[RMDB]
RNA sequence: GGGAACGACUCGAGUAGAGUCGAAAAUGAAAGCUGUGUGAGCGAGGCGGGCGGAGGAUGAGGCCGUGCCCGGGCUCUGGCUGCAGCCGCCCGGGGACACGCCGUGCUCCCUCGGGCUCCGGAAAAAAUGGCACAUUCAAUUCGUUGAAUGUGCCAUAAAAGAAACAACAACAACAAC
Reactivity to DMS in 0.01 (KOAc 150mM, MgCl2 10mM, bicine 150mM(pH8.5), 24C), signal-to-noise 1, nucleotides 027 to 126: u000g000a060a070a100g010c020u000g000u000g020u000g010a030g010c060g010a050g010g030c080g000g000g020c100g030g010a090g010g010a090u010g000a180g020g020c000c160g020u000g000c020c000c000g000g000g000c040u020c210u000g020g000c000u000g040c240a070g030c060c100g010c000c000c000g050g000g000g000a040c030a000c120g000c070c020g000u000g000c020u000c010c000c000u000c020g010g000g010c000u010c000c030g010g020a000a030a040a060a050